[RMDB]
RNA sequence: GGGAACGACUCGAGUAGAGUCGAAAAUGGGGGAGUGUGGGGGAGAAGGGGAGACCGAGCACCUCUUCCACUAUCUCCCUGUGUGGUUUUUGGUGAACCAUCCUGCCUCUGGGUGUCUUGCCUCCAGCAUAGCAUCUAUUUUCGAAUAGAUGCUAUGAAAAGAAACAACAACAACAAC
Reactivity to DMS in 0.01 (KOAc 150mM, MgCl2 10mM, bicine 150mM(pH8.5), 24C), signal-to-noise 6, nucleotides 027 to 126: u010g000g010g020g000g000a040g010u000g030u000g020g020g010g010g010a050g010a080a110g010g010g000g010a120g000a120c050c050g020a120g030c170a110c120c010u000c020u000u000c010c000a030c020u000a220u000c010u000c000c000c010u000g000u000g020u000g010g010u000u000u000u010u000g010g010u020g010a040a040c040c010a050u000c050c040u000g010c030c030u000c030u000g000g000g010u000g000u000c070u000u010g010c050c020u000c020c040a080g010
Reactivity to 2A3 in 0.01 (KOAc 150mM, MgCl2 10mM, bicine 150mM(pH8.5), 24C), signal-to-noise 5, nucleotides 027 to 126: u100g010g000g000g020g000a050g010u050g000u030g010g010g010g020g010a070g040a060a060g050g010g010g010a130g050a030c020c040g030a040g050c030a040c030c000u000c000u010u010c010c000a020c010u070a120u020c010u010c000c000c000u010g040u020g010u000g010g040u030u030u020u130u160g270g010u180g040a020a010c000c000a010u040c000c010u030g060c010c000u050c030u030g030g040g020u040g030u040c050u060u080g040c000c010u020c010c010a020g000
Source information:
An RNA of 177 nucleotides, treated with DMS and 2A3 and read out base by base. Conditions: 150 mM KOAc, 10 mM MgCl2 and 150 mM bicine (pH 8.5), 24 C.